Structure probing data (DMS) for a 177-nucleotide construct. It was measured as part of the RMDB library OK2TRN. DMS adducts were read by reverse transcription with MarathonRT. DMS (dimethyl sulfate) methylates the pairing face of unpaired adenines and cytosines.
RNA sequence: GGGAACGACUCGAGUAGAGUCGAAAAAUUUAGAGAAGUGCAACAACUUGUUGAACAAGGCUAUGAAUCUUGCCAAAGUAUGCAAGCUAUUGGAUAUAAAGAAUUAAUACCUGUGAUUAACGGACAAAUCGCAGAUGGUAUUCGUACCAUCUGCGAUAAAAGAAACAACAACAACAAC
Reactivity to DMS in 0.01 (KOAc 150mM, MgCl2 10mM, bicine 150mM(pH8.5), 24C), signal-to-noise 1, nucleotides 027 to 126: a020u000u000u000a100g010a160g000a040a090g010u020g000c030a000a020c060a110a050c120u010u000g010u000u000g000a130a060c070a090a120g020g000c080u000a160u010g000a150a070u000c070u000u010g030c000c010a010a090a090g000u000a070u030g010c090a050a140g000c050u000a050u000u000g000g010a010u000a130u020a030a080a060g000a030a020u000u000a030a020u000a070c000c000u000g010u030g000a110u000u000a010a020c070g000g000a130c300a060a040